[RMDB]
RNA sequence: GGGAACGACUCGAGUAGAGUCGAAAACCUCGGGGCAAAACCGGAAUAAUGAGGCUACCGAAGCGGUUAUCCUGUCGCUGGGAGAACCGCUGAGGGAAAGCUAAAACAGCGACUGCGCUCGGAGAAGCUUUUACCGGGACGCCUUCGGACCGGGGUUCCUAUAAGUUUAGUUCGCUAAACUUAUAGGAAAAGAAACAACAACAACAAC
Reactivity to 2A3 in 0.01 (KOAc 150mM, MgCl2 10mM, bicine 150mM(pH8.5), 24C), signal-to-noise 1, nucleotides 027 to 156: c000c000u000c000g000g000g010g010c030a010a010a120a120c060c000g040g100a060a090u250a110a040u210g040a050g040g000c020u040a040c030c020g020a020a000g000c000g000g000u020u000a000u030c000c000u000g060u100c040g000c070u110g000g010g000a000g010a000a010c000c000g000c000u020g000a020g000g010g010a030a020a000g000c040u050a000a020a030a070c020a010g020c000g010a010c020u070g110c050g020c060u070c100g110g040a070g020a070a050g040c020u110u060u060u130a190c010c030g010g010g020a050c010g000c000c000u040u120c040g030g000a000c000c010g030g000g000g010u040u000